[RMDB]
RNA sequence: GGGAACGACUCGAGUAGAGUCGAAAAGAUAUGGAUUACGAGGAGGUAUGACUAUUCGGAAACGAACGAAUCAUACUACCCACCCUCCAGUAAUCCUAAGUCAAACCUUUACGUUCGCGUAAAGGAACAUGUGAGCACACUUCGGUGUGCUCACAUGAAAAGAAACAACAACAACAAC
Reactivity to DMS in 0.01 (KOAc 150mM, MgCl2 10mM, bicine 150mM(pH8.5), 24C), signal-to-noise 1, nucleotides 027 to 126: g030a000u000a090u000g000g000a030u010u000a020c000g000a190g030g000a010g010g000u000a010u000g070a070c110u000a300u000u000c020g000g000a000a030a050c000g000a030a000c210g000a140a030u000c000a060u000a140c300u050a120c000c030c050a100c260c040c000u000c000c010a240g000u000a000a000u000c000c000u000a000a080g000u020c000a080a140a170c000c000u010u000u000a000c000g000u000u080c300g040c000g010u010a000a000a010g020g020a080a100
The data come from the RNA Mapping Database (RMDB), library TTRDEL. The record gives the reactivity of an RNA of 177 nucleotides to DMS. Conditions: 150 mM KOAc, 10 mM MgCl2 and 150 mM bicine (pH 8.5), 24 C.